Structure probing data (2A3 and DMS) for a 177-nucleotide construct.
For DMS, 1,768 sequencing reads were counted.
The data come from the RNA Mapping Database (RMDB), library OK2TST.
The 2A3 profile rests on 2,219 reads.
RNA sequence: GGGAACGACUCGAGUAGAGUCGAAAAUGAGUCGAUUGUAGUCGACGAUCAGGAUACCCUGUGACUCCAGAUAGCGAAAGACCAUUAGCUGCACGCCAAUGAUGAUCGCGAGCAGUUUCGCGAUGCGGCACCAUUAAUGCUUCGGCAUUAAUGGUGCAAAAGAAACAACAACAACAAC
Reactivity to 2A3 in 0.01 (KOAc 150mM, MgCl2 10mM, bicine 150mM(pH8.5), 24C), signal-to-noise 1, nucleotides 027 to 126: u100g020a010g000u020c010g030a020u000u190g250u230a090g060u020c000g010a010c010g010a050u040c020a010g000g070a070u120a230c000c010c000u000g040u040g030a020c030u010c020c020a030g040a130u100a040g030c040g040a120a010a010g030a030c030c010a050u040u060a020g030c060u050g000c030a000c050g020c010c020a110a120u150g100a060u100g010a020u080c040g000c010g000a010g000c070a040g040u040u120u010c070g000c020g000a010u070g080c070g050
Reactivity to DMS in 0.01 (KOAc 150mM, MgCl2 10mM, bicine 150mM(pH8.5), 24C), signal-to-noise 3, nucleotides 027 to 126: u030g000a120g010u000c000g020a130u000u010g020u010a200g030u000c040g030a020c020g010a030u000c020a060g000g000a260u010a110c110c000c020u000g010u000g000a190c160u000c020c060a120g020a060u000a130g030c060g000a040a040a220g000a080c020c020a040u000u010a080g000c020u000g000c070a110c060g040c010c070a050a120u000g000a080u000g010a050u010c060g010c010g020a060g010c140a080g000u000u000u000c000g010c010g000a050u010g020c200g000